[RMDB]
RNA sequence: GGGAACGACUCGAGUAGAGUCGAAAAUUGCUGGACAGUUCGACGACUUAAGGAGCCAUUCCCUUGUGGAUGGUUUUUAUUUCCGGUCGACAGAUCUCAGAUCGAAUGCUGGCAUUAGGAUUACUUGUAAUAUAUGGAUUUUCGAAUCCAUAUAUUAAAAAGAAACAACAACAACAAC
Reactivity to 2A3 in 0.01 (KOAc 150mM, MgCl2 10mM, bicine 150mM(pH8.5), 24C), signal-to-noise 9, nucleotides 027 to 126: u070u040g000c010u010g010g030a100c010a100g050u060u020c010g010a020c010g010a010c020u090u090a120a080g040g000a010g020c000c000a010u100u130c020c030c000u040u230g110u160g010g000a000u000g000g000u020u020u000u040u050a090u020u050u010c060c020g050g020u010c010g010a020c030a050g090a090u040c110u040c110a080g030a110u030c020g030a030a020u050g010c000u010g010g010c010a030u030u120a090g070g050a080u100u080a080c020u010u050g020
Reactivity to DMS in 0.01 (KOAc 150mM, MgCl2 10mM, bicine 150mM(pH8.5), 24C), signal-to-noise 9, nucleotides 027 to 126: u010u010g010c000u000g000g000a080c060a120g010u020u000c000g010a040c020g000a030c020u000u010a050a050g010g010a020g010c000c000a010u010u010c000c000c140u030u020g010u040g010g000a020u000g000g010u000u000u010u000u000a030u010u000u010c080c110g010g030u000c000g010a060c170a130g000a050u000c030u030c140a100g000a070u000c020g010a080a080u010g010c010u000g000g000c020a030u010u010a080g010g010a140u010u010a050c040u000u000g000

Record summary:
An RNA of 177 nucleotides, treated with 2A3 and DMS and read out base by base. For DMS the reverse transcriptase was MarathonRT. 2A3 is a SHAPE reagent: it acylates the 2'-hydroxyl of flexible nucleotides of all four kinds. Values cover nucleotides 27 to 126. For 2A3 the reverse transcriptase was SuperScript II with manganese.